Conditions: 150 mM KOAc, 10 mM MgCl2 and 150 mM bicine (pH 8.5), 24 C. The record gives the reactivity of an RNA of 177 nucleotides to DMS and 2A3. It was measured as part of the RMDB library OK1LIB. For 2A3 the reverse transcriptase was SuperScript II with manganese. Values cover nucleotides 27 to 126. The 2A3 profile rests on 812 reads.
RNA sequence: GGGAACGACUCGAGUAGAGUCGAAAAGAAUAAGCAAAAAUGUGAUCUUGCUUGUAAAUACAAUUUUGAGAGGUUAAUCAAUUACAAGUACUGCUAUUUUUGUCUCUCUCUGCAAUAACGAACCGAACAUAAUCGCCACUUUCGAGUGGCGAUUAUGAAAAGAAACAACAACAACAAC
Reactivity to DMS in 0.01 (KOAc 150mM, MgCl2 10mM, bicine 150mM(pH8.5), 24C), signal-to-noise 2, nucleotides 027 to 126: g030a020a080u080a100a100g020c040a000a050a060a100a030u000g000u000g020a110u020c040u030u000g000c000u000u010g000u020a000a000a130u040a060c120a040a050u000u040u020u000g000a090g000a090g010g050u010u020a040a070u000c090a070a030u000u000a070c080a010a030g000u020a110c160u000g010c070u000a060u000u020u020u000u010g000u000c020u000c020u000c020u010c020u000g000c070a100a070u070a000a070c090g010a120a130c090c070g000a070a190
Reactivity to 2A3 in 0.01 (KOAc 150mM, MgCl2 10mM, bicine 150mM(pH8.5), 24C), signal-to-noise 2, nucleotides 027 to 126: g030a060a070u150a030a040g010c030a030a080a070a010a030u250g130u090g200a280u000c000u000u010g000c000u000u000g000u020a060a060a100u290a060c050a050a150u000u040u160u190g020a050g000a100g100g080u140u300a050a000u130c010a010a050u050u000a010c010a040a040g000u000a040c100u040g140c000u000a030u110u020u000u020u010g110u000c000u000c010u000c010u000c000u040g010c070a010a130u160a040a030c060g080a030a000c040c000g000a010a000